[RMDB]
RNA sequence: GGGAACGACUCGAGUAGAGUCGAAAAACAGAGAGUUGUUAUGCACAAUUAGCUAUGUCUGGCAGUAGGGUAGACGUAUCCCUGAAUGCUCCGUAUGAUUAUUAUAAUGAUCAGGGUGGGGUAUUCAAGGGUAACAUCAAUUCGUUGAUGUUACCCUAAAAGAAACAACAACAACAAC
Reactivity to 2A3 in 0.01 (KOAc 150mM, MgCl2 10mM, bicine 150mM(pH8.5), 24C), signal-to-noise 2, nucleotides 027 to 126: a000c060a010g080a000g020a010g050u010u080g020u060u050a100u170g050c000a030c060a110a140u130u060a060g000c030u060a020u110g050u040c030u020g110g010c030a060g050u120a030g000g030g030u010a010g010a020c010g020u030a070u020c010c010c010u010g000a000a000u000g000c000u000c020c000g040u090a050u040g010a000u020u010a020u030u120a090u080a260a170u090g000a010u000c020a000g270g000g000u060g010g060g000g010u000a010u000u010c020a000
Reactivity to DMS in 0.01 (KOAc 150mM, MgCl2 10mM, bicine 150mM(pH8.5), 24C), signal-to-noise 2, nucleotides 027 to 126: a070c110a090g010a090g010a120g020u000u000g010u010u010a080u010g010c070a060c100a070a060u000u000a090g020c030u010a050u000g010u000c050u000g000g020c040a120g000u020a040g010g010g010u000a040g000a090c070g010u000a080u000c000c010c000u010g000a020a000u000g000c000u000c010c000g000u000a160u000g010a010u010u020a010u000u010a140u000a120a150u010g010a020u000c000a010g000g020g040u000g010g010g020g020u000a010u000u000c010a020